[RMDB]
RNA sequence: GGGAACGACUCGAGUAGAGUCGAAAAAAAUGCCUACUGGAACGAACAUUUAUGCUGUUAAAGGCGGUAUAGCUGAUAAAGUAUGGACUGAUUACGGUGGCGGUAAUUCUAUACAAAUUAAGACCGGUGCUAACGAAUGGAACUGGUAUAUGCAUUAUGAUGAGUACUCAUUCGUGAGUACUCAUCAAAAAGAAACAACAACAACAAC
Reactivity to 2A3 in 0.01 (KOAc 150mM, MgCl2 10mM, bicine 150mM(pH8.5), 24C), signal-to-noise 2, nucleotides 027 to 156: a000a000a000u050g050c000c000u020a010c020u010g070g010a070a020c030g020a040a000c040a030u060u100u110a080u070g000c020u000g020u140u070a170a080a050g060g000c000g000g000u080a040u040a070g000c010u040g030a050u030a100a120a000g050u020a060u050g000g030a010c010u020g030a040u000u140a010c030g040g010u040g060g030c010g000g000u020a050a030u080u050c020u030a070u010a050c050a030a150a080u120u130a130a000g050a020c010c000g020g080u020g050c050u070a060a100c000g100a060a020u090g000g040a060a000c010u000g000g070u040a080u010a000u100g110c050a040u080u060a090
Reactivity to DMS in 0.01 (KOAc 150mM, MgCl2 10mM, bicine 150mM(pH8.5), 24C), signal-to-noise 3, nucleotides 027 to 156: a040a080a030u000g000c010c020u000a140c070u000g010g010a080a120c030g000a110a080c070a080u000u000u010a070u020g040c000u000g030u000u000a090a110a220g020g000c000g030g060u000a050u000a120g010c040u000g020a180u010a070a090a060g010u000a030u000g010g010a060c110u010g010a110u000u010a090c030g020g020u010g020g060c030g040g020u010a020a090u000u010c040u000a110u010a110c050a060a030a100u000u000a090a150g010a080c030c000g020g000u000g020c020u010a060a160c110g010a090a150u000g010g010a060a060c060u000g000g000u000a060u000a100u020g020c050a070u000u000a160
Conditions: 150 mM KOAc, 10 mM MgCl2 and 150 mM bicine (pH 8.5), 24 C. Structure probing data (2A3 and DMS) for a 207-nucleotide construct. The DMS profile rests on 4,722 reads. Source: RMDB library OK3TST, as collected in RNAgym.